[RMDB]
RNA sequence: GGGAACGACUCGAGUAGAGUCGAAAAAAGGUGCCAUCAUAUCGGUUAAGAACUCUUAACUCUGAUGGCUUUCGAGUUAUGUGGAGCAUUGAAGCUCUCCCUUCAAAUGGUCGUACAGUUCCGUGAACUUUUAUUAGAAAUUCGUUUCUAAUAAAAGAAAAGAAACAACAACAACAAC
Reactivity to 2A3 in 0.01 (KOAc 150mM, MgCl2 10mM, bicine 150mM(pH8.5), 24C), signal-to-noise 2, nucleotides 027 to 126: a020a020g080g020u030g020c040c010a020u010c010a010u040a060u290c070g030g000u010u000a030a010g060a300a260c060u000c000u300u010a000a000c000u000c020u100g000a000u000g000g000c000u010u060u010c000g000a000g010u070u050a050u170g060u110g050g010a000g030c010a030u020u090g100a040a020g000c020u040c020u030c070c000c030u010u030c010a090a100a070u090g060g060u020c010g020u030a050c030a050g010u030u040c010c020g040u040g100a120a110
Reactivity to DMS in 0.01 (KOAc 150mM, MgCl2 10mM, bicine 150mM(pH8.5), 24C), signal-to-noise 3, nucleotides 027 to 126: a050a080g010g020u000g010c000c000a010u000c020a060u020a120u010c230g000g000u000u000a000a010g010a220a140c300u020c010u000u000a020a010c000u000c090u000g000a020u000g000g000c010u000u010u010c020g010a070g010u000u000a060u000g020u010g010g010a040g000c030a060u000u000g010a070a070g010c100u010c070u000c100c110c000u000u000c060a030a070a070u000g000g010u000c020g010u010a040c060a100g000u000u010c020c020g010u010g010a060a150